RNA sequence: GGGAACGACUCGAGUAGAGUCGAAAAGAUAUGGAUAGGGUCCCGACGUUGACGUAUACUCGGAAACGAGUAUAUAUCAGUCGGACCACUAUCCUAAGUCAAAGACCCAUUGUUCGCAAUGGGUCAACCUAUCGAUCGAGUUCGCUCGAUCGAUAGGAAAAGAAACAACAACAACAAC
Reactivity to 2A3 in 0.01 (KOAc 150mM, MgCl2 10mM, bicine 150mM(pH8.5), 24C), signal-to-noise 1, nucleotides 027 to 126: g020a020u090a020u180g010g000a000u000a010g050g040g000u130c100c160c070g000a000c020g100u190u300g000a000c020g040u000a000u000a030c000u030c000g000g000a050a060a030c000g000a000g000u000a000u010a000u010a000u000c010a010g000u010c000g030g000a000c000c010a050c010u030a000u000c000c000u010a120a020g040u000c090a130a110a060g010a010c030c000c000a020u030u040g100u060u110c300g000c210a000a000u020g000g000g020u020c000a000a000
Reactivity to DMS in 0.01 (KOAc 150mM, MgCl2 10mM, bicine 150mM(pH8.5), 24C), signal-to-noise 1, nucleotides 027 to 126: g000a020u000a300u020g010g000a010u000a000g010g010g040u040c130c090c140g010a000c000g000u000u020g070a010c030g080u000a040u000a010c010u010c000g000g000a040a130a140c010g000a010g000u000a000u000a000u000a010u000c010a230g020u000c020g000g000a020c000c000a040c040u000a010u010c000c000u000a030a150g000u000c070a060a120a160g010a010c000c000c000a010u020u010g000u000u000c290g030c010a000a000u000g010g000g010u000c020a000a010

Structure probing data (2A3 and DMS) for a 177-nucleotide construct. The DMS profile rests on 1,121 reads. DMS adducts were read by reverse transcription with MarathonRT. The RNA was probed in 150 mM KOAc, 10 mM MgCl2 and 150 mM bicine (pH 8.5) at 24 C. The 2A3 profile rests on 2,587 reads.